[RMDB]
RNA sequence: GGGAACGACUCGAGUAGAGUCGAAAAGAUAUGGAUAUGUAGGCUAGCUCCUACUCGGAAACGAGUAGAGAGCUUGGACCCUACUGUAUCCUAAGUCAAAAGCACUUACGCUUCGGCGUAAGUGCAAGACGUAUCCAACCUUCGGGUUGGAUACGUCAAAAGAAACAACAACAACAAC
Reactivity to DMS in 0.01 (KOAc 150mM, MgCl2 10mM, bicine 150mM(pH8.5), 24C), signal-to-noise 1, nucleotides 027 to 126: g000a020u000a010u050g000g000a000u000a020u000g000u000a000g000g020c010u000a000g000c010u000c000c010u000a000c000u000c000g030g010a020a040a000c010g000a020g020u000a010g000a070g010a000g010c000u010u000g010g000a000c300c000c000u000a000c000u020g000u000a010u000c000c000u000a000a090g000u000c020a040a130a130a210g010c000a000c000u000u000a020c000g020c010u000u000c300g030g040c000g000u000a020a020g020u000g010c000a030a020
Chemical mapping of a 177-nucleotide RNA with DMS. Conditions: 150 mM KOAc, 10 mM MgCl2 and 150 mM bicine (pH 8.5), 24 C. Values cover nucleotides 27 to 126.